[RMDB]
RNA sequence: GGGAACGACUCGAGUAGAGUCGAAAAUCUGUUGACACGUAAUCGUAUAGUCGAAGUCGGACUACGGUUACCGCAACAGAAGAUAGACCGCGUCAAGUCCGACUUGGACUAUUCUGGGAUCUAUCCACUUCACCAGAGUAUUCGUACUUUGGUGAAGAAAAGAAACAACAACAACAAC
Reactivity to DMS in 0.01 (KOAc 150mM, MgCl2 10mM, bicine 150mM(pH8.5), 24C), signal-to-noise 9, nucleotides 027 to 126: u000c030u000g010u000u000g010a130c140a080c180g010u000a070a070u000c060g010u000a040u000a020g010u000c000g000a050a050g010u000c050g010g000a020c000u000a070c020g010g010u000u000a050c050c060g000c090a080a070c150a080g000a080a090g010a050u000a070g010a030c010c000g010c200g010u010c210a100a040g000u000c010c000g010a060c080u000u000g000g000a010c000u000a020u000u000c030u010g010g010g010a070u000c070u000a080u000c040c100a210
Reactivity to 2A3 in 0.01 (KOAc 150mM, MgCl2 10mM, bicine 150mM(pH8.5), 24C), signal-to-noise 9, nucleotides 027 to 126: u020c010u020g050u030u070g080a040c030a010c150g080u100a040a080u100c040g000u020a020u020a060g020u010c100g160a050a010g040u050c030g020g000a000c010u010a020c030g010g010u010u020a040c030c020g020c020a080a170c020a070g080a050a000g010a010u070a020g040a010c010c020g050c060g130u090c100a070a010g010u000c000c000g010a080c060u030u070g090g000a000c000u010a020u040u010c060u080g030g010g020a030u010c020u040a100u040c030c020a030
Source information:
An RNA of 177 nucleotides, treated with DMS and 2A3 and read out base by base. For 2A3, 37,218 sequencing reads were counted. Reactivities are given for positions 27 through 126. Values are in units of 0.01, from 0 to 300, in steps of 10. The reactions ran in a buffer of 150 mM KOAc, 10 mM MgCl2 and 150 mM bicine (pH 8.5), at 24 C.